Conditions: 150 mM KOAc, 10 mM MgCl2 and 150 mM bicine (pH 8.5), 24 C.
An RNA of 177 nucleotides, treated with 2A3 and DMS and read out base by base.
Reactivities are rounded to 0.1 and cut off at 0 and 3.

RNA sequence: GGGAACGACUCGAGUAGAGUCGAAAAGAUAUGGACGAUACUAGGGAGCUUAUCGGAAACGAUAGAGCUUUGAUCUAGAUCGUCCUAAGUCAAAAGGUCGUAAGAGGCUUCGGCCUCUUACGACCAAGUAUCAGCAAUUCUUCGGAAUUGCUGAUACAAAAGAAACAACAACAACAAC
Reactivity to 2A3 in 0.01 (KOAc 150mM, MgCl2 10mM, bicine 150mM(pH8.5), 24C), signal-to-noise 2, nucleotides 027 to 126: g040a010u050a030u130g010g000a010c010g010a000u180a300c010u010a020g110g070g000a010g010c000u000u000a010u010c000g020g020a050a050a010c010g010a010u040a110g300a000g050c000u130u100u070g010a030u060c000u000a010g000a020u020c000g000u000c000c000u000a000a010g020u000c010a030a040a020a250g000g010u010c010g020u000a020a000g020a020g000g010c050u050u050c180g010g040c000c000u020c000u000u000a010c020g000a010c000c000a000a000
Reactivity to DMS in 0.01 (KOAc 150mM, MgCl2 10mM, bicine 150mM(pH8.5), 24C), signal-to-noise 2, nucleotides 027 to 126: g000a030u000a300u000g010g000a030c000g010a010u010a110c000u010a010g010g000g010a010g020c000u000u000a020u010c000g000g000a090a050a130c000g020a020u000a050g020a000g000c000u000u000u010g000a100u000c010u000a000g010a040u000c000g000u000c000c000u000a010a060g000u000c040a060a060a170a140g020g010u000c000g020u010a000a010g000a030g010g020c000u010u020c200g030g030c000c000u000c000u010u000a000c000g010a000c000c000a000a010
It was measured as part of the RMDB library TTRDEL.